[RMDB]
RNA sequence: GGGAACGACUCGAGUAGAGUCGAAAACUUGCAAACUUCGGUUUGCAAGAAAGAACGCUGCGGCGAGCAGCAGCCAGAGAUGGCAACACAAUCGCCAUAAAAAAAUCUAUGAGUUCGCUCAUAGAAACACAUGUAGCUAGUUCGCUAGCUACAUGUGAAAAGAAACAACAACAACAAC
Reactivity to DMS in 0.01 (KOAc 150mM, MgCl2 10mM, bicine 150mM(pH8.5), 24C), signal-to-noise 1, nucleotides 027 to 126: c000u020u000g000c010a000a000a010c000u000u020c190g040g000u000u010u000g000c020a010a000g010a060a080a240g010a210a140c180g000c010u000g010c030g000g030c000g030a060g020c000a020g010c000a060g020c000c000a000g010a130g000a100u000g010g010c010a140a070c100a050c050a050a130u000c010g000c020c060a200u050a000a010a010a100a000a060a030u000c010u000a040u000g000a010g010u000u020c210g010c010u000c000a010u010a000g000a040a040a060
Reactivity to 2A3 in 0.01 (KOAc 150mM, MgCl2 10mM, bicine 150mM(pH8.5), 24C), signal-to-noise 1, nucleotides 027 to 126: c000u000u010g000c000a020a010a000c010u040u020c090g130g000u000u000u000g000c000a010a000g000a010a000a000g010a050a010c100g000c010u000g000c030g020g000c010g030a020g040c000a010g000c000a010g020c000c000a030g010a000g000a090u010g000g000c000a070a040c070a000c030a040a090u010c030g010c040c060a040u300a020a170a000a010a010a010a060u000c010u000a010u020g000a000g030u060u100c240g050c080u000c000a000u000a020g020a000a000a000